[RMDB]
RNA sequence: GGGAACGACUCGAGUAGAGUCGAAAAAGCACGGUUUUUGAGGACGCAUUAUGUCCGUGCGGUAAUGCCCUCCUUUACACUUUCUCGCAUGGUGCGGGAGUGUGGAGAGGAAACAAAAGCUAGUCUCGAUAGGCGGUUAACUUCGGUUAACCGCCAAGGAUUACUACAUCUUCGGAUGUAGUAAUCCAAAAGAAACAACAACAACAAC
Reactivity to DMS in 0.01 (KOAc 150mM, MgCl2 10mM, bicine 150mM(pH8.5), 24C), signal-to-noise 1, nucleotides 027 to 156: a090g060c010a030c020g050g000u010u010u000u010u030g000a120g000g000a040c120g030c050a150u000u000a050u000g010u000c020c000g000u000g000c000g000g080u000a080a030u010g030c000c010c000u000c060c020u000u000u000a090c020a020c010u000u010u000c010u000c000g000c020a300u020g010g020u000g020c020g060g010g020a060g050u000g040u000g010g010a020g020a060g000g000a030a080a080c000a080a060a090a170g020c020u000a170g000u000c000u000c040g020a230u000a210g020g040c000g010g000u000u000a020a010c000u000u020c300g080g000u000u000a000a020c000c000g000c000c000a000a010
Reactivity to 2A3 in 0.01 (KOAc 150mM, MgCl2 10mM, bicine 150mM(pH8.5), 24C), signal-to-noise 3, nucleotides 027 to 156: a010g020c020a010c010g000g040u040u050u040u070u110g090a090g040g040a020c040g020c080a070u040u030a050u240g050u010c010c000g010u010g000c010g010g040u130a060a050u130g020c000c000c000u020c000c000u010u040u020a010c000a000c010u110u110u030c010u020c000g010c030a080u270g300g030u300g140c000g000g000g010a000g000u040g000u010g000g000a030g000a010g000g030a030a080a000c010a000a010a000a000g030c030u070a030g020u040c010u010c050g060a080u080a180g020g000c000g010g000u000u000a000a010c010u030u050c230g010g000u000u000a000a000c010c000g020c000c000a000a000